[RMDB]
RNA sequence: GGGAACGACUCGAGUAGAGUCGAAAAAUGGGGCCAGGCGUGGUGGCUCAUGCCUGUAAUCCUAGCACUUUUAGGAGGCUGAGGCAGGUGGCUUCCCUGGGACCAGCCUGGCCAACAUGGUGAAACCCCGAUAGCAAUUAUUCGUAAUUGCUAUCGGAAAAGAAACAACAACAACAAC
Reactivity to DMS in 0.01 (KOAc 150mM, MgCl2 10mM, bicine 150mM(pH8.5), 24C), signal-to-noise 4, nucleotides 027 to 126: a030u000g010g020g000g010c000c000a010g000g000c010g020u010g020g000u000g010g010c000u010c070a080u010g000c000c000u000g000u010a280a150u000c010c010u000a020g010c300a130c240u020u020u050u020a040g010g000a040g010g020c100u040g010a040g000g000c010a030g000g020u060g010g000c030u000u000c070c010c010u010g000g020g000a080c030c020a100g000c000c000u000g000g000c000c000a010a020c020a030u000g000g020u020g000a110a100a140c020c020
Reactivity to 2A3 in 0.01 (KOAc 150mM, MgCl2 10mM, bicine 150mM(pH8.5), 24C), signal-to-noise 7, nucleotides 027 to 126: a000u030g020g000g000g000c000c000a000g010g010c130g120u060g000g010u010g050g000c010u020c060a030u120g010c000c000u110g180u110a030a050u020c000c000u010a010g060c060a180c280u100u160u120u090a030g000g040a010g030g000c100u050g060a020g010g020c010a010g000g060u120g090g040c010u080u050c020c000c010u050g020g010g020a000c000c000a000g000c000c000u000g000g000c000c000a010a020c000a000u030g030g000u130g040a060a050a040c000c020